Source: RMDB library OK2TRN, as collected in RNAgym. Chemical mapping of a 177-nucleotide RNA with 2A3 and DMS. For DMS the reverse transcriptase was MarathonRT. For 2A3, 1,274 sequencing reads were counted.
RNA sequence: GGGAACGACUCGAGUAGAGUCGAAAAGCGGUCGCCGAGGCGGUGGUGCGCGGACCGCUGCAGAUCGCCGUCGCGUGCGACCUGCCGCGGUCGUCCCUGCUGGCCGACGCGCGCCGGCUGGCCCCGGGUAUCCUUGAGUCUUCGGACUCAAGGAUACAAAAGAAACAACAACAACAAC
Reactivity to 2A3 in 0.01 (KOAc 150mM, MgCl2 10mM, bicine 150mM(pH8.5), 24C), signal-to-noise 1, nucleotides 027 to 126: g000c010g010g010u020c000g030c000c040g030a050g010g010c030g000g010u020g060g000u130g050c300g090c060g230g050a010c000c020g020c010u000g000c000a010g000a050u010c000g000c020c020g120u150c170g040c100g120u240g000c010g000a010c000c010u010g000c000c140g010c010g010g010u020c010g000u010c000c000c010u000g000c020u060g250g060c000c010g030a050c040g020c000g000c040g020c010c020g100g000c010u020g010g000c000c030c000c000g240g010
Reactivity to DMS in 0.01 (KOAc 150mM, MgCl2 10mM, bicine 150mM(pH8.5), 24C), signal-to-noise 1, nucleotides 027 to 126: g000c000g000g020u000c020g030c030c000g020a300g000g000c000g010g020u000g000g000u000g010c100g060c100g030g040a030c030c020g030c020u010g010c000a030g000a020u000c000g000c000c020g010u000c260g030c200g030u020g010c010g030a020c020c060u000g010c000c080g000c010g000g010u000c010g020u010c060c100c020u010g010c030u000g010g030c000c000g000a300c300g010c080g010c150g010c000c010g020g000c000u000g010g000c070c000c030c050g000g010